[RMDB]
This 177-nucleotide RNA was probed chemically with 2A3 and DMS. The RNA was probed in 150 mM KOAc, 10 mM MgCl2 and 150 mM bicine (pH 8.5) at 24 C. For 2A3 the reverse transcriptase was SuperScript II with manganese. Reactivities are given for positions 27 through 126. It was measured as part of the RMDB libraries RFM100 and RFMREP.
RNA sequence: GGGAACGACUCGAGUAGAGUCGAAAAAUGGGUGGUGCCAUUAGCCGUGCCUGGUGGCGUUGGCAGCACAAAUAUGUGUUCCCCAAGCGUGCUGGCAUUGCACCAUUUUUCCAAUUGACCGUGGCCAACCUGCUCUAGUAUUCGUACUAGAGCAGGUAAAAGAAACAACAACAACAAC
Reactivity to 2A3 in 0.01 (KOAc 150mM, MgCl2 10mM, bicine 150mM(pH8.5), 24C), signal-to-noise 9, nucleotides 027 to 126: a000u040g010g010g010u030g010g010u010g010c000c020a050u160u170a040g000c010c010g060u060g020c010c010u230g130g050u250g040g010c030g040u050u150g010g010c020a000g000c010a000c010a000a120a010u300a060u130g140u040g010u030u020c010c000c030c000a040a060g070c030g090u070g010c020u020g010g010c010a010u010u060g020c100a170c100c000a020u010u010u000u010u000c010c000a050a080u050u140g060a060c020c060g030u040g020g030c020c020a000
Reactivity to DMS in 0.01 (KOAc 150mM, MgCl2 10mM, bicine 150mM(pH8.5), 24C), signal-to-noise 4, nucleotides 027 to 126: a010u000g000g000g020u010g010g010u000g000c000c000a120u040u040a080g030c000c020g020u000g020c010c010u010g030g040u060g000g020c040g030u040u030g020g010c030a060g000c000a010c020a090a140a080u030a130u040g010u040g020u000u000c000c010c000c100a100a120g010c240g010u000g010c010u010g000g000c000a010u000u000g000c020a100c000c020a000u000u000u000u000u000c020c130a090a110u030u010g010a100c100c050g020u020g010g010c070c100a150